[RMDB]
RNA sequence: GGGAACGACUCGAGUAGAGUCGAAAAGCGUACUACUUUCGAGGUAUUAGAGGUAUGGCACCUUGUCCCAAAUAGGACAAGGGCCAUACUCCCCACCUAAUACUCCCCACCGAAAGUAUCGCAAAUUCACUAAUGCGCUUCGGCGCAUUAGUGAAAAGUUACCUACUUUGUUCGCAAAGUAGGUAACAAAAGAAACAACAACAACAAC
Reactivity to 2A3 in 0.01 (KOAc 150mM, MgCl2 10mM, bicine 150mM(pH8.5), 24C), signal-to-noise 3, nucleotides 027 to 156: g010c010g080u130a100c020u010a000c000u040u000u030c010g020a030g010g010u010a000u000u010a010g030a020g030g000u020a010u010g020g000c050a120c120c000u000u020g010u040c000c020c050a230a280a170u260a090g000g010a010c000a000a000g010g000g000c020c010a000u000a000c000u010c000c010c010c000a020c000c010u000a010a010u020a010c030u170c070c040c010c000a070c030c010g010a020a000a000g010u010a030u300c020g000c000a010a050a080u020u000c000a010c010u010a000a000u000g000c000g010c000u030u100c200g080g000c000g000c000a000u010u000a000g000u000g000a000a000a000a000
Reactivity to DMS in 0.01 (KOAc 150mM, MgCl2 10mM, bicine 150mM(pH8.5), 24C), signal-to-noise 2, nucleotides 027 to 156: g050c050g000u000a110c070u000a040c020u000u000u000c000g000a300g000g010u000a010u010u000a020g000a300g000g000u010a000u000g020g020c010a100c000c000u000u000g020u010c000c000c020a080a250a200u000a060g030g010a030c000a010a000g000g020g010c040c000a010u000a010c010u000c300c070c020c040a300c190c010u000a010a050u000a010c010u000c300c100c030c060a300c170c000g010a010a030a050g000u000a020u000c060g010c040a060a120a170u000u010c010a090c000u010a000a020u010g020c030g020c020u000u010c300g020g070c000g060c000a000u000u000a000g020u000g000a000a020a020a140